[RMDB]
RNA sequence: GGGAACGACUCGAGUAGAGUCGAAAAGAUAUGGAAUUCGGGAGGAACUACACCCUCUGUUCGGAAACGAACAUGGUGCCGUUGAUCGAAUUCCUAAGUCAAAGAGAGUAAGUUCGCUUACUCUCAACUUUCACUAUCUGUUCGCAGAUAGUGAAAGAAAAGAAACAACAACAACAAC
Reactivity to DMS in 0.01 (KOAc 150mM, MgCl2 10mM, bicine 150mM(pH8.5), 24C), signal-to-noise 5, nucleotides 027 to 126: g000a030u010a300u000g000g000a020a000u000u010c000g010g000g010a070g010g000a110a040c040u010a300c010a010c000c000c000u000c010u000g010u000u000c000g000g000a070a070a230c010g000a010a000c000a000u000g000g000u000g010c020c030g000u000u020g020a080u010c010g000a000a000u000u010c000c010u000a020a080g010u000c040a050a120a150g000a020g010a010g010u000a000a010g000u000u020c240g020c000u000u000a000c000u000c000u010c010a050a060
Reactivity to 2A3 in 0.01 (KOAc 150mM, MgCl2 10mM, bicine 150mM(pH8.5), 24C), signal-to-noise 5, nucleotides 027 to 126: g010a020u090a040u170g010g010a010a010u010u010c000g000g010g010a060g040g030a060a040c080u160a030c230a000c010c000c000u020c010u000g000u000u000c000g030g050a040a090a070c010g010a000a000c010a010u150g010g010u000g010c010c000g060u100u020g020a020u030c000g000a000a000u000u000c000c000u000a100a000g030u030c040a020a300a020g020a000g000a000g010u010a020a010g020u040u200c300g020c170u000u000a000c000u000c000u000c000a010a000